[RMDB]
RNA sequence: GGGAACGACUCGAGUAGAGUCGAAAACAGUCCUAUAGUACGUAUCACCAGGACGUCAAACAAACUAGACCCUGGCUAACCCACCGCGAUGAUGAUCAGUGCGGCCUAGUCCUGAGCGUGAAGCAGGCACUGUGUUCGAGUUCGCUCGAACACAGUGAAAAGAAACAACAACAACAAC
Reactivity to 2A3 in 0.01 (KOAc 150mM, MgCl2 10mM, bicine 150mM(pH8.5), 24C), signal-to-noise 1, nucleotides 027 to 126: c000a030g110u040c000c000u040a110u020a130g040u050a030c060g030u070a090u110c020a000c070c010a020g020g010a050c060g010u030c000a080a120a040c040a070a120a000c020u020a040g020a030c000c070c000u020g040g000c000u060a110a170c030c000c070a000c050c010g050c050g060a090u070g000a010u040g000a000u090c020a010g020u060g090c010g050g000c010c050u040a020g010u050c000c000u000g080a010g110c040g020u060g040a090a000g000c000a010g060g020
Reactivity to DMS in 0.01 (KOAc 150mM, MgCl2 10mM, bicine 150mM(pH8.5), 24C), signal-to-noise 1, nucleotides 027 to 126: c200a130g020u000c010c010u000a080u020a090g000u000a060c050g020u000a080u030c110a110c040c100a060g010g000a060c060g010u010c040a110a090a200c150a120a110a070c100u000a180g000a050c040c000c010u040g000g020c050u010a030a110c110c010c030a050c070c030g000c070g000a040u000g000a070u000g000a060u020c040a130g020u000g010c050g020g020c100c040u000a050g020u020c020c000u000g000a120g000c030g040u000g040a070a120g040c010a030g000g000